[RMDB]
RNA sequence: GGGAACGACUCGAGUAGAGUCGAAAAAAUUCUUUGAAGACUGAGAGGGGUGAGGAAGCUACAGAAGAAAACUUGGAAGCCAGCAGAGAUUGAUGAGGUUUAAGGGAAGAAGCCACAAGUGCUGAUGUAGAAGCUGUAGCAAGUUAUCCAAAAGAUCUAGAGAUGUAUGAUUCGUCAUACAUCUCUAAAAAGAAACAACAACAACAAC
Reactivity to DMS in 0.01 (KOAc 150mM, MgCl2 10mM, bicine 150mM(pH8.5), 24C), signal-to-noise 2, nucleotides 027 to 156: a070a050u000u000c010u020u000u030g040a090a130g030a150c050u030g010a110g010a110g000g010g000g010u000g000a080g020g010a100a100g000c020u000a110c070a020g000a090a060g000a100a070a070a060c050u000u000g040g010a040a140g000c030c060a070g050c030a100g020a100g030a100u000u000g010a080u000g000a110g050g020u000u000u000a050a120g080g000g000a060a070g000a060a100g000c060c030a110c080a050a080g030u000g030c020u030g000a040u000g000u000a090g010a070a080g000c040u000g010u010a060g020c030a000a110g010u010u010a070u010c050c030a030a130a050a150g010a100u020c060
Reactivity to 2A3 in 0.01 (KOAc 150mM, MgCl2 10mM, bicine 150mM(pH8.5), 24C), signal-to-noise 3, nucleotides 027 to 156: a010a010u120u020c030u130u020u020g030a050a030g040a030c060u080g030a020g000a030g060g040g020g020u060g020a020g010g030a090a000g000c000u040a040c040a100g040a080a020g030a030a110a010a040c010u050u040g030g000a050a010g070c080c040a000g000c070a020g060a010g010a100u040u140g020a040u070g050a040g000g000u070u050u070a040a030g000g010g000a020a010g000a030a000g050c050c030a090c080a080a020g020u030g100c020u020g030a060u060g020u040a010g010a110a000g000c010u000g010u030a020g010c000a000a010g010u060u040a050u040c000c020a020a090a060a020g050a030u100c030
This 207-nucleotide RNA was probed chemically with DMS and 2A3. The RNA was probed in 150 mM KOAc, 10 mM MgCl2 and 150 mM bicine (pH 8.5) at 24 C. Reactivities are given for positions 27 through 156.